[RMDB]
RNA sequence: GGGAACGACUCGAGUAGAGUCGAAAAACUGGGGAUUUCUGACAUACCUAUGCACUGAUCACCGAGGUGAUGUAAAUCAUUUCCAGGCUUUUUGUACAGGGGACAUUGUGAUAUAUCUCUGCACUGACCAUGGGCAUGCGUUCGCGCAUGCCCAUGGAAAAGAAACAACAACAACAAC
Reactivity to 2A3 in 0.01 (KOAc 150mM, MgCl2 10mM, bicine 150mM(pH8.5), 24C), signal-to-noise 1, nucleotides 027 to 126: a030c000u000g000g000g000g060a060u040u120u110c130u070g060a020c000a050u120a090c000c020u160a110u060g000c060a020c030u070g000a090u210c000a040c000c000g050a050g000g090u080g120a080u000g080u160a080a300a000u080c000a000u000u090u000c000c000a000g000g000c020u130u150u010u000u080g030u010a090c040a090g000g000g000g070a000c170a090u070u180g000u040g090a000u010a040u000a020u180c000u000c000u020g100c000a080c070u000g060a070